Conditions: 150 mM KOAc, 10 mM MgCl2 and 150 mM bicine (pH 8.5), 24 C.
Structure probing data (2A3 and DMS) for a 177-nucleotide construct.
RNA sequence: GGGAACGACUCGAGUAGAGUCGAAAAGAUAUGGAGCGAGGUGGUGCCAGUCGAUCGGAAACGAUCGAACGGUAAUUCCACUCGCUCCUAAGUCAAACUCAAGCCACCCUUCGGGGUGGCUUGAGAAGUUACACAACAGGUUCGCCUGUUGUGUAACAAAAGAAACAACAACAACAAC
Reactivity to 2A3 in 0.01 (KOAc 150mM, MgCl2 10mM, bicine 150mM(pH8.5), 24C), signal-to-noise 2, nucleotides 027 to 126: g010a010u030a040u100g010g010a000g020c010g010a030g070g300u110g010g020u050g100c000c010a020g160u030c010g000a010u010c010g000g000a050a030a030c000g000a010u000c010g000a020a000c010g000g020u080a150a200u220u030c000c010a020c000u000c000g000c000u000c000c000u010a000a010g000u000c010a060a030a080c000u000c010a030a020g000c040c020a010c060c000c020u060u130c300g050g000g000g010u010g010g030c000u010u010g000a010g000a000a010
Reactivity to DMS in 0.01 (KOAc 150mM, MgCl2 10mM, bicine 150mM(pH8.5), 24C), signal-to-noise 2, nucleotides 027 to 126: g010a010u010a300u010g000g000a020g020c000g020a020g030g040u010g010g020u010g020c000c000a130g010u000c000g000a020u000c010g010g000a060a060a200c000g030a010u000c000g010a000a020c030g020g010u010a060a150u010u020c000c000a090c000u000c010g010c000u000c000c000u000a010a050g000u000c020a100a160a230c020u000c000a010a020g000c000c010a020c020c000c000u000u000c220g020g000g010g050u000g000g000c000u000u000g000a000g010a020a070

For 2A3 the reverse transcriptase was SuperScript II with manganese.
It was measured as part of the RMDB library TTRDEL.